[RMDB]
RNA sequence: GGGAACGACUCGAGUAGAGUCGAAAACUUUCUGUGGACACCACUGAGCUCUGCCUCAACUCCACCCUCUGCGACCGGAGGACUAUGCCCCUAGUAACUGCUGUCGGUGUGGACGCUGUGCUGGUUCCAACUAGGAGAAGUUCGCUUCUCCUAGUUGAAAAGAAACAACAACAACAAC
Reactivity to DMS in 0.01 (KOAc 150mM, MgCl2 10mM, bicine 150mM(pH8.5), 24C), signal-to-noise 9, nucleotides 027 to 126: c150u000u000u010c040u000g030u000g010g000a080c090a090c080c060a070c090u000g000a090g000c040u010c100u010g010c090c020u010c050a060a110c080u000c020c030a070c060c030c020u000c030u000g010c070g010a090c090c040g000g000a080g010g010a090c080u000a070u000g000c020c010c010c060u000a060g010u010a070a100c070u000g010c040u010g010u000c060g010g010u010g020u000g010g010a070c080g000c040u000g010u000g000c040u000g010g010u000u000c060
Reactivity to 2A3 in 0.01 (KOAc 150mM, MgCl2 10mM, bicine 150mM(pH8.5), 24C), signal-to-noise 5, nucleotides 027 to 126: c020u070u130u040c050u100g050u050g030g020a030c010a040c100c000a050c090u060g030a010g010c010u010c090u230g080c000c020u020c030a050a040c020u030c010c010a030c010c000c000u040c030u060g060c060g130a080c050c040g060g010a020g020g030a020c020u050a090u230g050c020c000c000c000u010a030g030u050a140a110c030u060g040c030u060g070u100c030g020g090u120g030u030g070g020a010c030g010c030u040g000u040g030c020u010g020g000u070u000c030

Background
Chemical mapping of a 177-nucleotide RNA with DMS and 2A3. Values cover nucleotides 27 to 126. Conditions: 150 mM KOAc, 10 mM MgCl2 and 150 mM bicine (pH 8.5), 24 C.